Chemical mapping of a 177-nucleotide RNA with DMS and 2A3.
Source: RMDB library TTRINS, as collected in RNAgym.
The 2A3 profile rests on 2,743 reads.

RNA sequence: GGGAACGACUCGAGUAGAGUCGAAAAGAUAUGGAAGUCCAGUCCUUGGAUUUACGUCCAUCCUAAGCCUAUCGGAAACGAUAGGAACGCGGAUGGACGUUGUCAGGACGGGAGGACUUCCUAAGUCGAGCUUUUACUAGUUCGCUAGUAAAAGCUCAAAAGAAACAACAACAACAAC
Reactivity to DMS in 0.01 (KOAc 150mM, MgCl2 10mM, bicine 150mM(pH8.5), 24C), signal-to-noise 2, nucleotides 027 to 126: g000a090u000a300u000g000g020a040a000g000u010c010c000a120g030u000c000c020u000u010g030g020a040u000u010u000a030c020g000u010c000c000a010u000c010c020u000a230a260g010c000c000u000a010u000c000g010g010a160a140a230c000g020a010u000a020g030g010a020a040c100g030c300g000g000a000u010g000g040a030c000g000u000u000g020u000c000a010g000g000a030c000g000g010g000a090g000g000a050c000u000u000c000c030u010a020a140g000u010c090
Reactivity to 2A3 in 0.01 (KOAc 150mM, MgCl2 10mM, bicine 150mM(pH8.5), 24C), signal-to-noise 1, nucleotides 027 to 126: g010a040u160a130u250g000g000a000a000g000u010c000c020a020g010u000c000c060u090u220g300g000a060u300u240u120a010c000g000u000c000c000a000u000c000c000u060a110a060g010c020c000u000a000u000c010g060g000a110a050a080c000g010a000u010a040g010g030a040a000c070g040c050g060g000a000u000g030g000a000c000g000u010u020g010u000c000a000g040g020a010c090g060g020g060a280g000g000a000c000u010u000c010c000u010a090a010g060u060c040